[RMDB]
RNA sequence: GGGAACGACUCGAGUAGAGUCGAAAACUAUGACGGCGAUGUGCAGUCAGAUGUGGUCGCGCAAGGGUACGGGUCCCUUGGUCUGAUGACCUCCGUGCUCGUCUGCCCAGACGGGAAGACCAUCGAGCUCUUUUGCUGGUUUCGACCAGCAAAAGAGAAAAGAAACAACAACAACAAC
Reactivity to DMS in 0.01 (KOAc 150mM, MgCl2 10mM, bicine 150mM(pH8.5), 24C), signal-to-noise 1, nucleotides 027 to 126: c130u010a060u000g020a030c080g030g020c010g020a060u010g020u020g000c100a120g000u000c030a030g020a080u010g010u010g020g000u000c000g000c060g000c040a040a050g000g030g000u020a070c170g040g020g000u000c000c040c010u000u010g000g010u000c000u000g010a160u000g000a040c020c010u010c100c040g010u000g030c010u010c020g020u010c010u000g040c050c030c050a260g000a030c030g010g030g010a090a070g010a100c020c090a040u000c010g030a230g000
Reactivity to 2A3 in 0.01 (KOAc 150mM, MgCl2 10mM, bicine 150mM(pH8.5), 24C), signal-to-noise 2, nucleotides 027 to 126: c020u050a070u140g030a020c060g040g080c000g040a080u040g100u180g040c080a040g060u040c020a020g000a060u140g020u050g040g000u020c000g020c020g010c030a030a000g030g000g050u140a060c170g160g090g210u170c000c020c000u000u010g040g060u110c070u200g300a300u190g030a050c010c010u000c040c040g030u030g040c020u000c020g000u000c030u060g040c000c050c000a020g060a020c040g000g000g020a070a030g010a030c030c000a030u030c040g030a020g070
The record gives the reactivity of an RNA of 177 nucleotides to DMS and 2A3. Conditions: 150 mM KOAc, 10 mM MgCl2 and 150 mM bicine (pH 8.5), 24 C. For DMS the reverse transcriptase was MarathonRT. For 2A3 the reverse transcriptase was SuperScript II with manganese.